[RMDB]
RNA sequence: GGGAACGACUCGAGUAGAGUCGAAAACGCGAGGAGGUGGAGAUGCCAUGCCGACCCGAAGAGGAAAGAAGGACGCGAGACGGUGAACCUGUGAGCGGAAACCCGCUUUAUUCACUGGGGUCGACAAGAACUAUCUUUUCUUCGGAAAAGAUAGUUCAAAAGAAACAACAACAACAAC
Reactivity to DMS in 0.01 (KOAc 150mM, MgCl2 10mM, bicine 150mM(pH8.5), 24C), signal-to-noise 3, nucleotides 027 to 126: c120g020c040g010a040g000g010a050g000g000u000g020g010a100g010a120u020g030c070c030a070u010g010c040c020g000a070c040c040c050g010a110a080g010a100g010g000a060a100a070g000a070a080g000g010a060c060g010c060g020a100g000a130c070g010g000u000g010a040a140c140c080u000g010u010g000a090g000c000g000g010a080a120a150c230c020c020g030c020u000u000u000a090u010u000c020a040c040u000g010g010g000g000u000c020g010a080c140a050a110
Reactivity to 2A3 in 0.01 (KOAc 150mM, MgCl2 10mM, bicine 150mM(pH8.5), 24C), signal-to-noise 2, nucleotides 027 to 126: c040g040c040g010a060g010g000a010g040g040u070g030g030a100g020a080u070g040c010c010a040u090g000c020c000g040a030c040c000c010g060a080a030g050a040g080g000a070a070a010g020a010a030g030g020a000c030g020c010g020a090g020a040c070g020g000u040g020a060a040c030c020u070g050u070g040a010g040c000g030g000a120a120a110c030c000c020g000c000u030u110u070a100u030u050c040a020c060u060g000g000g000g070u000c020g020a030c020a030a060